[RMDB]
RNA sequence: GGGAACGACUCGAGUAGAGUCGAAAAGGAAUUUUCUUUUUGGAUUCGAAACCUUUCAUGAUCUUAAACAUAACCUCUCAUUCAGAAAUUUUGUCAUGAUUUAAUAAAUCAAUUGGCUUGCUUAACCAAAGAUCCGUUUUUUCGAAAACGGAUCUUUAAAAGAAACAACAACAACAAC
Reactivity to 2A3 in 0.01 (KOAc 150mM, MgCl2 10mM, bicine 150mM(pH8.5), 24C), signal-to-noise 3, nucleotides 027 to 126: g040g020a080a020u060u080u000u040c070u070u170u090u100u170g060g060a090u080u110c060g030a060a050a050c010c000u000u100u080c070a050u070g060a070u130c000u100u150a120a090a020c060a090u130a060a050c020c020u070c000u000c030a040u110u080c050a070g110a040a080a110u130u180u120u110g010u010c020a020u000g020a060u040u020u080a180a080u250a110a120a000u000c040a030a120u050u020g000g000c020u010u050g020c030u120u040a130a020c030c000
Reactivity to DMS in 0.01 (KOAc 150mM, MgCl2 10mM, bicine 150mM(pH8.5), 24C), signal-to-noise 1, nucleotides 027 to 126: g000g040a080a130u020u040u010u000c000u000u000u000u010u040g000g050a060u010u030c030g010a120a130a060c140c030u040u020u030c030a100u010g000a080u030c070u000u010a100a060a090c070a000u000a040a050c050c010u010c000u010c090a050u000u030c160a050g010a090a050a080u000u010u010u010g010u020c000a040u020g000a010u020u000u020a080a110u010a110a080a040u000c020a100a080u050u010g000g010c020u000u020g000c050u000u000a030a090c140c130

The record gives the reactivity of an RNA of 177 nucleotides to 2A3 and DMS.
The RNA was probed in 150 mM KOAc, 10 mM MgCl2 and 150 mM bicine (pH 8.5) at 24 C.
DMS adducts were read by reverse transcription with MarathonRT.
For DMS, 1,470 sequencing reads were counted.